RNA sequence: GGGAACGACUCGAGUAGAGUCGAAAAAGACCGAGCGCCCGUGCGGGAGUCCGGGACGGUUCAGUGCUGCUGAGCGGGUUGGUCGGAGUCCCGAUCCGGUUCGGGGUCGGAGUCGCUACUGUCGGCCCGUGCGGCCCCGUUCUCGUGACCGGGGACGCAGUUGGGGUAGAUUCGUCUACCCCAACUGAAAAGAAACAACAACAACAAC
Reactivity to 2A3 in 0.01 (KOAc 150mM, MgCl2 10mM, bicine 150mM(pH8.5), 24C), signal-to-noise 2, nucleotides 027 to 156: a000g010a040c020c010g030a060g150c010g040c000c000c060g080u110g060c030g000g150g040a020g060u070c110c090g110g060g080a040c080g000g010u070u120c060a040g000u070g260c040u090g070c000u010g050a010g000c010g000g080g000u130u260g130g040u000c000g010g010a040g010u040c000c000c000g000a010u000c000c020g000g040u060u070c010g000g010g000g010u020c020g010g030a050g000u020c000g010c140u300a260c040u190g250u270c030g010g040c010c000c050g030u150g060c040g010g000c010c000c000c000g020u020u020c160u090c010g110u180g000a010c010c000g020g010g000g000a010c040g010